Notes
Chemical mapping of a 207-nucleotide RNA with 2A3 and DMS. For 2A3 the reverse transcriptase was SuperScript II with manganese. DMS adducts were read by reverse transcription with MarathonRT.
[RMDB]
RNA sequence: GGGAACGACUCGAGUAGAGUCGAAAAGUAAGGAUAUAACUUAUAGAUCAGUGAAUUUUCACAAACUGAAUAUACCCCUGUAACUAGUACCCUUUCAAGAGAGAACAUUACCAGCACUCCACAUGCCCUCUUGUAUAAAGCAGAUGUUCCUAACUGGCACUACUACUGCUUUCGAGCAGUAGUAGUGAAAAGAAACAACAACAACAAC
Reactivity to 2A3 in 0.01 (KOAc 150mM, MgCl2 10mM, bicine 150mM(pH8.5), 24C), signal-to-noise 3, nucleotides 027 to 156: g040u030a030a030g010g010a020u020a050u060a300a070c020u070u040a030u130a180g060a080u090c040a000g030u050g080a150a260u190u090u220u230c050a060c020a070a100a010c030u030g000a040a030u030a030u080a160c000c010c000c020u050g000u080a040a010c000u010a050g080u030a050c010c030c000u010u050u080c100a100a000g030a030g010a000g030a120a000c000a130u050u140a040c020c000a000g040c030a010c060u040c070c000a050c010a080u040g000c000c000c010u030c000u000u000g040u010a110u030a100a060a020g040c010a010g030a090u030g050u010u000c000c000u000a070a030c010u030g060g000
Reactivity to DMS in 0.01 (KOAc 150mM, MgCl2 10mM, bicine 150mM(pH8.5), 24C), signal-to-noise 2, nucleotides 027 to 156: g000u000a090a050g010g000a090u010a070u000a060a180c110u010u000a080u000a150g000a150u000c000a080g000u000g000a250a170u000u010u000u000c090a070c090a040a190a150c060u000g010a020a120u010a130u000a120c060c000c050c040u000g030u000a050a080c050u010a170g010u000a070c000c050c010u020u010u000c050a080a090g020a170g000a070g010a040a070c040a040u000u010a060c070c040a060g030c010a100c050u000c020c000a090c090a060u010g010c020c000c020u010c040u010u000g000u010a090u010a040a050a070g040c020a090g000a170u000g030u000u000c010c010u000a030a090c050u010g000g040